[RMDB]
RNA sequence: GGGAACGACUCGAGUAGAGUCGAAAACUGCGCACGCAAGACCCGCUGCACGUAGACCAGGGACGCCUGACCCUGCGCCAGGGAGACGGUCUGCAGGUUCAGGGAAACACACUGACGCUCCGUCUGUCCAACCCCCUGCGCAUCUCCAACGGAGCGCAGGUGACAUACCUUUCGAGGUAUGUCACCUAAAAGAAACAACAACAACAAC
Reactivity to 2A3 in 0.01 (KOAc 150mM, MgCl2 10mM, bicine 150mM(pH8.5), 24C), signal-to-noise 3, nucleotides 027 to 156: c030u040g000c010g000c030a070c080g040c040a110a040g050a170c000c010c020g060c050u050g000c010a030c060g030u070a040g040a090c010c050a020g000g010g050a030c060g050c050c000u000g010a020c020c010c000u010g010c020g000c000c020a090g040g150g020a120g050a020c070g010g040u080c220u160g000c010a000g010g000u010u020c010a000g000g020g050a030a050a000c080a000c020a020c080u090g070a050c020g010c020u000c010c000g040u040c070u090g090u070c050c020a060a090c060c010c010c010c020u020g000c040g000c040a110u030c020u000c050c000a010a020c020g010g000a020g000c000g000c000
Reactivity to DMS in 0.01 (KOAc 150mM, MgCl2 10mM, bicine 150mM(pH8.5), 24C), signal-to-noise 2, nucleotides 027 to 156: c050u000g040c030g040c000a080c070g020c040a080a050g000a090c030c030c020g250c050u000g000c050a100c080g030u000a070g000a050c030c010a060g000g010g030a050c100g010c030c010u000g000a030c060c020c020u000g020c050g000c060c020a220g020g000g010a110g000a100c100g020g000u000c030u020g040c000a090g000g000u010u010c020a030g190g040g010a070a130a120c060a110c060a120c020u000g010a090c000g010c020u020c000c000g000u000c060u010g020u000c010c030a130a190c060c030c010c010c020u010g030c050g000c030a120u000c060u000c050c050a020a060c060g000g000a080g030c010g080c040